[RMDB]
RNA sequence: GGGAACGACUCGAGUAGAGUCGAAAACAAUUGUUCAAGCCCUUGAACUGUGCGCCCAGCGUGGCCGCGUUGAGUGUGUUGACGUGGAUGCUGCUAAAAAGUCGGGCGUUUUCAAGAACGUUCCUGCUCGCAGCGACCUGUCUGCCGACAUCAACGAAAACCUGAUUGUCGAGCUCUACUCCAAGUAAGGGCUAGAAAAUAGGUGCAUCCAUGCAGAUUUCGGUAAAUGAGUUCCUGACUCCCCGCCACAUUGAUGUGCAGGAAAAAGCACAGGCUUCGGCCUGUGCAAAAGAAACAACAACAACAAC
Reactivity to DMS in 0.01 (KOAc 150mM, MgCl2 10mM, bicine 150mM(pH8.5), 24C), signal-to-noise 2, nucleotides 027 to 266: c130a080a120u020u010g040u000u000c070a050a100g020c090c080c100u000u000g030a030a020c050u010g000u000g000c110g000c070c020c020a200g030c240g020u010g000g020c130c050g000c030g010u000u000g000a040g020u000g020u010g010u000u020g010a040c000g020u010g000g050a090u010g000c010u010g040c000u010a060a110a090a100a010g020u000c300g000g010g010c020g000u000u000u010u030c300a140a190g000a050a010c030g010u000u060c010c000u000g030c020u000c120g010c100a020g000c050g030a020c000c010u000g010u000c030u000g020c050c000g000a060c040a060u000c040a020a050c080g000a050a050a100a080c200c100u000g000a070u000u000g020u000c000g020a140g000c010u000c010u020a010c050u040c130c150a010a070g010u000a040a020g010g000g010c020u010a030g000a000a050a100a050u010a050g010g010u000g000c110a030u000c030c060a080u000g000c050a050g000a150u000u000u030c030g000g030u020a040a060a110u010g000a140g000u000u010c040c040u000g030a060c070u000c000c030c010c140g000c200c020a090c040a180u030u020g030a100u010g010u000g000c000a090g000g000a010a060a120a160a160
Reactivity to 2A3 in 0.01 (KOAc 150mM, MgCl2 10mM, bicine 150mM(pH8.5), 24C), signal-to-noise 1, nucleotides 027 to 266: c020a000a170u060u210g020u060u070c040a040a010g020c000c040c000u020u100g020a050a010c100u030g010u090g030c110g000c000c060c070a130g060c050g110u230g030g040c030c000g010c000g000u030u020g010a000g060u100g010u010g090u150u110g070a090c160g090u030g000g030a050u100g000c030u040g000c050u120a140a060a000a000a140g080u080c090g000g000g000c010g000u050u000u000u060c090a060a020g060a050a010c020g030u200u300c020c000u060g000c010u020c030g000c000a000g000c000g020a070c000c040u050g040u050c060u020g010c000c000g000a010c010a060u000c000a030a040c060g110a100a040a000a090c040c000u110g030a200u030u130g050u070c010g000a050g000c000u000c000u000a050c030u050c100c070a040a000g000u070a030a100g050g040g000c000u000a030g070a000a070a010a050u080a030g060g000u050g000c000a010u010c020c000a010u040g010c010a080g080a210u050u150u300c060g030g060u100a170a110a130u050g070a000g070u060u010c000c010u040g000a050c010u040c030c060c010c020g070c030c000a000c010a050u020u100g030a060u100g130u040g020c000a010g070g030a050a030a260a020a000

The record gives the reactivity of an RNA of 307 nucleotides to DMS and 2A3. Conditions: 150 mM KOAc, 10 mM MgCl2 and 150 mM bicine (pH 8.5), 24 C. 2A3 adducts were read by reverse transcription with SuperScript II with manganese. The 2A3 profile rests on 983 reads.